[RMDB]
RNA sequence: GGGAACGACUCGAGUAGAGUCGAAAAUGCUUAUGAGGAGGACACUGAAUUAGCAACAUUCAUUUUGGACAGGAGAGUCAUCUUACCACGAGUCGGUCACGAGAUCUUAAACAACUCCAUCACAGGACCAUAGCACCAUGUUCGCAUGGUGCUAUGGAAAAGAAACAACAACAACAAC
Reactivity to 2A3 in 0.01 (KOAc 150mM, MgCl2 10mM, bicine 150mM(pH8.5), 24C), signal-to-noise 3, nucleotides 027 to 126: u060g000c020u080u060a040u140g020a010g030g020a010g040g030a030c020a020c120u040g030a080a070u080u040a070g040c020a030a040c010a060u030u080c010a030u040u090u110u130g060g020a040c030a020g000g050a060g060a010g050u050c030a060u000c050u030u070a070c020c020a090c070g000a010g040u040c010g000g000u020c010a000c050g030a040g020a090u050c030u100u170a080a070a030c020a020a050c060u020c020c010a010u080c040a040c030a050g000g030a020
Reactivity to DMS in 0.01 (KOAc 150mM, MgCl2 10mM, bicine 150mM(pH8.5), 24C), signal-to-noise 4, nucleotides 027 to 126: u010g010c110u000u010a100u000g020a160g000g020a080g020g000a100c090a060c090u000g010a110a050u000u000a070g020c060a070a080c140a100u000u020c070a060u020u000u000u010g010g020a050c020a100g000g010a080g020a080g000u010c080a050u010c020u000u000a090c080c030a150c060g000a040g010u010c030g010g000u000c020a050c070g010a100g000a040u000c060u010u000a050a090a080c090a060a090c110u000c020c040a060u000c110a060c160a090g000g010a200
This 177-nucleotide RNA was probed chemically with 2A3 and DMS. For 2A3, 3,515 sequencing reads were counted. For DMS the reverse transcriptase was MarathonRT. The data come from the RNA Mapping Database (RMDB), library OK2TST.